[RMDB]
RNA sequence: GGGAACGACUCGAGUAGAGUCGAAAAACUGGAUCAUGUACGCAUGAUCCAGAAUGCCACAUACAUAGCACGAUUGGAGGCUUUGGAAUUUGAGUCUCGGUGAAUCAAAGUUCUUUGGUCUUGUGAAUCCACGUGCAACUAAAAGGAGUGCUAACAGUGACUUUUGGUACGCUGUGUAUAUGCAGAAAAAGAUAUUAGACACCAAUUAAGCCGGGACGAAAGCCUAAUUGGAUUGCUUUCGUCUGACUAUGCGUGUUUUACAUUUAAUCGUCUAUUUCGAUAGACGAAAAAGAAACAACAACAACAAC
Reactivity to DMS in 0.01 (KOAc 150mM, MgCl2 10mM, bicine 150mM(pH8.5), 24C), signal-to-noise 4, nucleotides 027 to 266: a150c010u000g000g010a000u000c010a010u000g000u010a120c190g010c000a000u000g000a010u000c010c000a000g010a050a040u000g010c010c300a120c140a060u020a050c100a050u000a070g010c000a090c110g000a120u020u000g020g020a060g000g000c010u000u010u020g000g010a050a040u010u000u000g000a110g010u000c010u010c250g030g030u020g010a030a060u000c040a040a030a060g000u010u000c000u000u000u010g010g010u000c000u030u000g010u020g000a110a130u000c070c070a070c040g020u010g000c090a130a050c060u000a010a020a050a020g000g000a140g030u010g000c080u010a100a090c190a090g030u010g000a090c010u000u000u000u000g010g020u000a080c160g000c040u000g020u000g000u000a010u000a080u010g000c050a070g010a070a080a080a060a050g000a080u000a080u000u000a060g000a030c010a020c020c040a050a070u010u010a080a090g010c030c020g010g020g010a020c010g000a020a000a010g000c020c190u000a070a090u010u020g020g010a240u010u000g010c020u000u000u000c010g020u000c010u000g010a040c020u000a060u000g000c120g010u000g010u010u010u000u010a080c150a110u020u010u000a080a180
Reactivity to 2A3 in 0.01 (KOAc 150mM, MgCl2 10mM, bicine 150mM(pH8.5), 24C), signal-to-noise 3, nucleotides 027 to 266: a030c000u000g010g020a020u000c000a000u000g000u030a040c260g000c090a000u000g000a000u010c000c000a000g000a000a000u110g030c010c000a060c020a110u230a030c020a050u140a010g010c020a010c060g040a030u120u220g060g050a010g020g020c000u020u040u070g040g030a060a050u030u080u100g030a010g040u010c050u050c070g110g060u080g060a030a030u070c050a060a030a110g150u080u000c010u030u040u080g070g030u050c030u080u110g080u040g100a090a040u010c030c000a000c020g040u030g020c050a000a050c020u110a000a030a020a050g050g030a100g110u110g060c030u090a120a060c030a100g030u050g140a070c000u070u050u090u170g070g000u070a080c090g000c030u010g020u000g010u000a030u030a070u300g030c020a030g180a060a130a000a030a000g060a030u100a040u130u000a060g040a030c010a010c070c000a030a050u080u010a030a010g020c020c000g060g020g000a000c010g000a000a000a010g010c010c030u120a100a150u120u140g130g170a150u250u180g020c000u010u010u010c000g020u010c020u020g020a040c000u040a010u080g030c050g030u010g030u010u000u050u040a000c000a030u070u130u090a060a090